[RMDB]
RNA sequence: GGGAACGACUCGAGUAGAGUCGAAAACCAGAGGCUUCGGCCUCUGGAAAACCUUUGUGCACUACCCACCGGACCGAACUACAAGACAACUUCCCAUUGGGAAGCUAAUCUUGCGGUCCGAGGUGCACUCUGGUAAAGACCGCAGUUCGCUGCGGUCCAUUUAAGCCAGGUUCGCCUGGCUUAAAUGAAAAGAAACAACAACAACAAC
Reactivity to 2A3 in 0.01 (KOAc 150mM, MgCl2 10mM, bicine 150mM(pH8.5), 24C), signal-to-noise 5, nucleotides 027 to 156: c010c000a010g000a000g000g020c090u190u200c300g170g000c010c000u020c000u000g000g030a030a030a010a010c000c000u000u000u010g010u000g000c000a010c010u120a160c000c010c020a010c000c000g000g000a000c010c000g030a070a100c070u130a070c300a020a000g000a010c020a050a020c080u010u000c040c030c100a300u220u300g000g010g000a010a000g000c000u060a090a100u010c000u000u010g000c000g000g010u010c000c000g000a000g000g000u000g000c000a000c000u010c000u010g010g000u040a080a050a010g000a000c000c000g010c000a000g000u030u120c140g030c160u010g000c000g010g000u010c000
Reactivity to DMS in 0.01 (KOAc 150mM, MgCl2 10mM, bicine 150mM(pH8.5), 24C), signal-to-noise 2, nucleotides 027 to 156: c000c030a000g020a060g010g020c010u000u000c300g120g020c000c000u000c000u000g010g000a050a080a060a050c000c000u000u010u020g030u000g020c000a010c000u000a030c030c000c000a300c200c010g010g020a050c020c010g010a080a300c030u010a100c000a010a010g000a040c030a040a070c010u010u000c000c000c000a300u000u000g070g010g010a010a010g020c010u000a120a070u000c010u000u000g000c000g020g030u010c000c000g010a010g030g010u000g000c010a000c000u000c040u000g020g030u020a080a090a100g000a030c010c000g030c010a070g030u000u000c300g070c010u000g020c000g020g030u000c020